[RMDB]
Source: RMDB library OK1LIB, as collected in RNAgym. The record gives the reactivity of an RNA of 177 nucleotides to 2A3. 2A3 is a SHAPE reagent: it acylates the 2'-hydroxyl of flexible nucleotides of all four kinds. Conditions: 150 mM KOAc, 10 mM MgCl2 and 150 mM bicine (pH 8.5), 24 C.
RNA sequence: GGGAACGACUCGAGUAGAGUCGAAAACACUCGAUAGACGAAAGUUGGGCACUGCGAAUAUCCUUUUAGGUAGAAGUAUAACCAUAAAUUAAAUACACUAUCUUGUCGAGCAACAGCGCAAGAUCCGGAGCAGCGAUUAGUUCGCUAAUCGCUGCUCAAAAGAAACAACAACAACAAC
Reactivity to 2A3 in 0.01 (KOAc 150mM, MgCl2 10mM, bicine 150mM(pH8.5), 24C), signal-to-noise 2, nucleotides 027 to 126: c020a020c020u050c090g050a110u040a110g080a000c160g070a140a000a000g130u040u070g000g030g000c110a110c030u090g010c000g060a060a150u160a000u010c020c000u000u060u090u300a020g000g000u040a020g050a220a000g000u000a020u140a160a120c010c090a100u240a210a040a070u260u180a040a070a080u130a030c070a000c020u000a000u000c000u000u050g060u000c030g000a000g020c120a080a090c000a000g070c020g030c000a040a040g000a010u030c080c080g090